[RMDB]
RNA sequence: GGGAACGACUCGAGUAGAGUCGAAAAGAAAGAAAGAAAGUUCAUUGUUUAUCGGAAACUUUAAACCAUAACCAUUCAAACUUUUCCAGAAGUUAGUUUGAAUAGAAAUUAAAAAGAAACUUCUGAAUAACCUUAUCAUGCUUCGGCAUGAUAAGAACAAUAGAAAUGACUUCGGUCAUUUCUAUUGAAAAGAAACAACAACAACAAC
Reactivity to 2A3 in 0.01 (KOAc 150mM, MgCl2 10mM, bicine 150mM(pH8.5), 24C), signal-to-noise 2, nucleotides 027 to 156: g050a000a010a000g060a060a070a020g080a030a110a010g000u070u070c050a060u110u160g030u120u160u130a130u110c030g030g100a080a070a070c010u070u090u070a090a050a030c000c040a030u060a060a080c020c010a000u010u000c000a010a000a000c000u020u000u000u000c070c020a000g000a000a000g010u000u010a000g000u000u020u020g030a010a010u040a140g020a010a060a010u220u300a070a060a000a010a000g000a000a000a000c000u000u000c000u000g000a000a040u060a000a010c020c000u010u010a000u000c000a010u000g010c020u030u010c080g060g000c000a000u010g000a000u000a010a000g010a010a010